[RMDB]
RNA sequence: GGGAACGACUCGAGUAGAGUCGAAAAUUGUGGUCAAGACCUUGGCGUAGAAUCCAAGGUUGUCAAGGUUCCUAUUGACUUAACAAUGAUUGAGUUUAUGUUAUGGUGUAAGGAUGGACAGGGGAAACUAGGUGUAGAGAUUCGUCUCUACACCUAGAAAAGAAACAACAACAACAAC
Reactivity to 2A3 in 0.01 (KOAc 150mM, MgCl2 10mM, bicine 150mM(pH8.5), 24C), signal-to-noise 3, nucleotides 027 to 126: u020u010g030u030g030g010u060c030a050a040g000a000c000c010u000u000g020g000c030g070u100a050g100a090a020u020c040c000a040a000g030g000u020u040g010u000c000a020a030g050g020u050u050c020c000u030a100u020u060g010a000c000u060u060a060a010c040a060a160u100g060a200u100u140g040a060g180u060u070u070a110u140g060u070u070a100u160g080g010u050g040u090a060a070g030g050a060u090g000g030a000c020a040g020g020g000g020a010a080a040
Reactivity to DMS in 0.01 (KOAc 150mM, MgCl2 10mM, bicine 150mM(pH8.5), 24C), signal-to-noise 9, nucleotides 027 to 126: u000u000g030u000g010g010u010c050a070a100g000a020c000c000u000u000g000g000c130g000u010a180g010a160a140u000c030c020a030a020g000g010u000u000g010u000c080a060a070g000g000u000u010c030c050u010a110u000u000g010a030c010u000u010a060a030c030a050a050u000g010a120u000u000g000a100g010u000u000u000a050u020g010u000u000a060u000g000g010u000g010u000a060a080g010g010a070u000g000g010a050c050a080g000g000g010g000a100a080a190
This 177-nucleotide RNA was probed chemically with 2A3 and DMS. The RNA was probed in 150 mM KOAc, 10 mM MgCl2 and 150 mM bicine (pH 8.5) at 24 C. For 2A3 the reverse transcriptase was SuperScript II with manganese. Source: RMDB library M2PK90, as collected in RNAgym. Reactivities are given for positions 27 through 126.